[RMDB]
RNA sequence: GGGAACGACUCGAGUAGAGUCGAAAAACAAGCUGCACGUGCCUGCGAGCAGUUUUCGAAAUCGCACGUUUCACGUAAAGACGCAACUCUACUCGAGAAAGCGAGUCACGCAGACAGCGUCAAGGAAGCAAUAGUAGCACUUCGGUGCUACUAUUGCAAAAGAAACAACAACAACAAC
Reactivity to 2A3 in 0.01 (KOAc 150mM, MgCl2 10mM, bicine 150mM(pH8.5), 24C), signal-to-noise 2, nucleotides 027 to 126: a010c020a020a010g000c020u020g020c030a010c090g080u110g070c030c090u090g000c030g010a020g090c010a020g000u060u040u070u050c050g040a060a030a000u100c020g030c050a020c080g010u000u070u120c160a100c120g070u110a010a100a100g020a020c020g000c010a010a060c000u000c010u000a000c000u000c020g000a000g030a010a000a000g060c020g010a010g050u080c050a010c120g070c060a010g100a210c060a050g010c000g030u040c060a020a070g130g000a140a020
Reactivity to DMS in 0.01 (KOAc 150mM, MgCl2 10mM, bicine 150mM(pH8.5), 24C), signal-to-noise 1, nucleotides 027 to 126: a100c190a120a150g000c010u000g030c050a040c030g010u000g020c030c060u010g010c010g010a070g020c050a050g010u000u000u010u010c090g010a040a030a060u000c020g030c140a120c010g000u000u000u020c070a090c100g050u010a120a080a050g010a120c010g030c110a120a090c080u030c000u000a000c000u000c010g030a030g000a020a070a020g000c020g000a110g010u000c070a040c120g020c030a100g010a030c100a050g010c050g000u000c030a050a080g000g010a040a100